This 170-nucleotide RNA was probed chemically with DMS and 2A3. DMS adducts were read by reverse transcription with MarathonRT. 2A3 adducts were read by reverse transcription with SuperScript II with manganese.

RNA sequence: GGGAACGACUCGAGUAGAGUCGAAAAAUAGGCUUAUCAAGAGAGGUGGAGGGACUGGCCCGAUGAAACCCGGCAGCAAGAAAUGGUGCCAAUUCCUGCAGCGGAAACGUUGAAAGAUGAGCCGAUGUCACCGUUGAGUUCGCUCAACGGAAAAGAAACAACAACAACAAC
Reactivity to DMS in 0.01 (KOAc 150mM, MgCl2 10mM, bicine 150mM(pH8.5), 24C), signal-to-noise 3, nucleotides 027 to 129: a080u070a100g010g050c010u020u010a000u030c050a110a130g020a110g030a120g000g030u000g010g000a070g000g000g000a090c080u040g070g000c000c000c000g000a110u040g040a060a150a080c050c020c020g010g010c060a040g030c050a100a080g030a060a050a060u070g000g000u060g030c030c030a010a000u020u010c020c020u000g020c040a040g010c040g000g000a080a080a100c090g000u000u050g020a070a020a080g010a040u030g010a000g010c040c000g000a060u020g010u040c000a130
Reactivity to 2A3 in 0.01 (KOAc 150mM, MgCl2 10mM, bicine 150mM(pH8.5), 24C), signal-to-noise 6, nucleotides 027 to 129: a000u150a030g000g000c000u020u000a010u010c080a180a010g070a000g000a060g100g020u030g030g030a020g000g010g010a000c010u000g010g020c030c000c000g060a080u060g010a020a010a030c000c000c000g010g000c010a030g010c010a010a040g070a100a170a040u140g060g000u020g020c000c000a000a000u030u020c000c000u050g040c020a010g010c010g040g020a040a030a010c040g000u010u040g050a090a030a010g000a010u000g000a000g000c000c010g010a050u110g060u060c040a010